[RMDB]
RNA sequence: GGGAACGACUCGAGUAGAGUCGAAAAGUAAUGAAGCAAAUCUCCAAACGCCAACGAUGAGCGUUUCGCAAUCGCCGCUUAAGGCUUUUGCCGAGGCUGCUUGAGCCUUGUUACCAAAGAAAAGCCGAAAACCCAAAUGUCUUCGGACAUUUGGGAACAAAUAUCUAACGUUCGCGUUAGAUAUUUGAAAAGAAACAACAACAACAAC
Reactivity to 2A3 in 0.01 (KOAc 150mM, MgCl2 10mM, bicine 150mM(pH8.5), 24C), signal-to-noise 4, nucleotides 027 to 156: g020u060a030a160u170g090a080a010g040c060a050a060a160u090c040u040c080c050a070a020a000c030g000c030c020a130a060c180g170a230u190g000a060g020c010g010u000u010u060c020g030c000a020a010u010c040g020c040c000g070c130u210u230a100a070g000g000c030u000u030u000u000g010c000c000g010a000g010g000c060u090g000c010u050u030g010a010g000c000c000u030u010g050u110u140a050c030c030a030a010a000g020a010a070a010a000g020c030c010g100a060a080a080a120c000c000c010a000a000a000u000g000u000c010u020u050c220g100g000a000c000a000u000u000u000g000g000g000a010a000
Reactivity to DMS in 0.01 (KOAc 150mM, MgCl2 10mM, bicine 150mM(pH8.5), 24C), signal-to-noise 2, nucleotides 027 to 156: g000u000a060a010u000g000a070a050g000c040a050a010a080u000c030u000c020c010a070a040a070c020g060c020c000a090a110c070g020a100u000g020a080g040c030g000u000u000u010c080g020c010a140a040u010c140g000c030c010g020c190u000u000a070a170g020g010c000u000u000u000u010g010c000c020g010a100g020g040c000u010g010c070u010u000g020a050g000c010c000u010u000g010u000u000a160c040c040a050a100a160g000a150a100a070a110g020c060c060g000a060a070a090a140c010c020c000a000a000a020u000g000u000c000u000u000c300g010g000a020c000a000u000u010u010g000g010g010a000a020